[RMDB]
Conditions: 150 mM KOAc, 10 mM MgCl2 and 150 mM bicine (pH 8.5), 24 C. Structure probing data (DMS and 2A3) for a 177-nucleotide construct. For 2A3 the reverse transcriptase was SuperScript II with manganese. Values are in units of 0.01, from 0 to 300, in steps of 10. For DMS, 734 sequencing reads were counted. Source: RMDB library RFMREP, as collected in RNAgym.
RNA sequence: GGGAACGACUCGAGUAGAGUCGAAAAUUCCUGGUCUCCGCGCGAUUACACGCCGGCGACUCAAGGCACCUACACGAACGGACGGUUCGUGUCUCUCCCUAAGAUCGGGAGUAGCAGGGCAUAGGUUAAUGCCAACAAUGUUCGCAUUGUUGGCAUUAAAAGAAACAACAACAACAAC
Reactivity to DMS in 0.01 (KOAc 150mM, MgCl2 10mM, bicine 150mM(pH8.5), 24C), signal-to-noise 1, nucleotides 027 to 126: u020u000c010c010u010g010g010u000c000u000c000c040g010c280g060c010g020a160u000u010a140c210a130c000g010c000c000g010g000c100g010a020c010u000c090a130a160g000g030c210a100c030c000u000a010c010a000c000g030a040a030c020g020g010a250c270g030g010u020u000c000g020u000g000u000c060u000c000u000c000c000c010u030a110a180g000a210u010c250g000g000g010a010g020u000a010g020c140a140g000g010g030c050a100u000a050g010g010u010u010
Reactivity to 2A3 in 0.01 (KOAc 150mM, MgCl2 10mM, bicine 150mM(pH8.5), 24C), signal-to-noise 1, nucleotides 027 to 126: u050u010c000c000u000g030g000u040c010u000c000c000g090c020g010c000g240a090u040u280a100c150a030c030g000c000c000g000g000c000g000a000c000u020c120a010a000g080g000c020a110c150c000u050a010c070a000c010g000a000a010c010g060g300a030c160g170g000u010u010c000g000u000g000u010c000u000c000u000c000c000c040u100a230a100g030a200u240c100g000g010g010a020g000u020a050g030c030a030g010g000g030c030a080u080a190g150g000u100u040